[RMDB]
RNA sequence: GGGAACGACUCGAGUAGAGUCGAAAACGGACGGGAUUUUAGCCUGGUUGCAUGUUUACCCAUUUCGUGCUGGGUCCUGGACCCAGUUAAGAUAAUAGAAAUAUUAUCGAUUUCUUUACCGUCCGGACACCCUAUGACUAUUCGUAGUCAUAGGGUGAAAAGAAACAACAACAACAAC
Reactivity to DMS in 0.01 (KOAc 150mM, MgCl2 10mM, bicine 150mM(pH8.5), 24C), signal-to-noise 5, nucleotides 027 to 126: c010g000g000a020c010g010g000g020a150u010u010u010u010a090g020c090c070u000g000g010u010u000g010c040a060u010g000u000u000u010a120c030c010c030a120u000u010u000c180g010u010g010c050u000g010g000g000u000c030c160u000g030g010a040c010c000c000a010g010u010u000a060a150g000a010u000a010a010u010a010g000a150a090a160u000a000u000u000a010u000c010g000a200u000u000u000c070u000u000u000a160c020c000g010u000c000c000g010g010a220
Reactivity to 2A3 in 0.01 (KOAc 150mM, MgCl2 10mM, bicine 150mM(pH8.5), 24C), signal-to-noise 2, nucleotides 027 to 126: c010g010g000a000c010g000g000g100a100u100u060u080u300a050g030c010c020u050g100g020u110u120g070c060a040u080g020u120u160u170a160c000c000c000a010u090u150u170c120g050u090g010c000u000g020g030g000u040c000c150u140g130g030a010c000c000c000a000g000u010u020a040a030g000a010u010a010a010u010a010g040a010a070a010u000a010u010u050a020u040c020g010a020u060u100u050c020u030u130u070a070c010c000g000u000c040c000g000g000a000